[RMDB]
RNA sequence: GGGAACGACUCGAGUAGAGUCGAAAAAUAUGUCAGUGGUCCCUGUAAGAGGAUCUAGGACAUAGGGAGGGUGGGUCAGAGCGCGGAUGCCCUAGAUCACGCGCGCGAGAAGUUAUGGGAACCACAAGACUGAUCCAUCGUUCGCGGUGGGUUGGUCAAAAGAAACAACAACAACAAC
Reactivity to DMS in 0.01 (KOAc 150mM, MgCl2 10mM, bicine 150mM(pH8.5), 24C), signal-to-noise 5, nucleotides 027 to 126: a110u010a020u020g000u010c050a110g010u000g000g010u000c000c000c000u000g010u020a050a070g000a140g000g000a030u000c010u000a080g010g000a040c030a030u010a070g000g000g010a130g000g000g000u050g000g000g000u000c090a050g010a060g020c050g010c050g000g000a050u000g000c030c020c020u010a060g000a030u000c010a100c030g000c030g000c040g000c060g010a080g000a060a080g010u020u000a060u000g000g000g000a160a050c040c040a020c080a000a100
Reactivity to 2A3 in 0.01 (KOAc 150mM, MgCl2 10mM, bicine 150mM(pH8.5), 24C), signal-to-noise 3, nucleotides 027 to 126: a000u070a020u060g050u020c020a010g020u000g020g000u020c000c000c000u000g060u080a030a010g050a120g030g010a000u000c000u000a010g030g000a000c010a010u020a000g000g030g030a180g040g030g210u180g020g020g000u030c000a010g000a020g010c040g000c020g010g000a010u030g020c010c010c000u000a010g000a010u020c010a020c070g010c000g000c000g000c030g010a050g020a050a010g000u030u010a020u050g000g000g000a010a010c010c010a010c020a000a010